[RMDB]
RNA sequence: GGGAACGACUCGAGUAGAGUCGAAAAGAUGCUCCUAAGGUCCUUCAUACAAGGUAUUGGCUGGAAUGAUUGUACCAACAAAAUCAUAGUUUAGCAAUGUUGGCUUUUCUCUCAGAGAUAUGAAACCGGAAUCAAUUUGAUUCGUCAAAUUGAUUCCAAAAGAAACAACAACAACAAC
Reactivity to 2A3 in 0.01 (KOAc 150mM, MgCl2 10mM, bicine 150mM(pH8.5), 24C), signal-to-noise 3, nucleotides 027 to 126: g020a020u070g020c020u010c020c010u010a030a050g090g000u040c010c020u020u060c020a090u060a180c040a050a040g010g040u060a070u040u130g060g000c060u020g000g050a100a080u050g030a050u070u040g020u120a150c000c000a040a020c030a000a130a010a010u070c040a050u060a150g120u060u170u120a020g020c000a080a100u070g020u030u040g060g000c000u060u020u050u000c020u000c000u020c070a040g000a010g000a070u060a070u210g070a100a070a040c070c050
Reactivity to DMS in 0.01 (KOAc 150mM, MgCl2 10mM, bicine 150mM(pH8.5), 24C), signal-to-noise 5, nucleotides 027 to 126: g000a120u000g020c050u010c020c010u000a160a130g000g010u000c020c010u000u000c080a070u010a110c160a120a060g020g010u010a060u000u010g010g020c040u000g020g000a100a050u000g010a050u000u000g020u000a160c050c050a030a030c060a080a090a060a060u010c030a060u000a100g010u000u010u010a080g000c080a080a080u000g000u010u000g010g010c090u000u000u000u000c040u000c040u010c080a090g010a120g000a060u010a050u000g000a060a080a110c210c150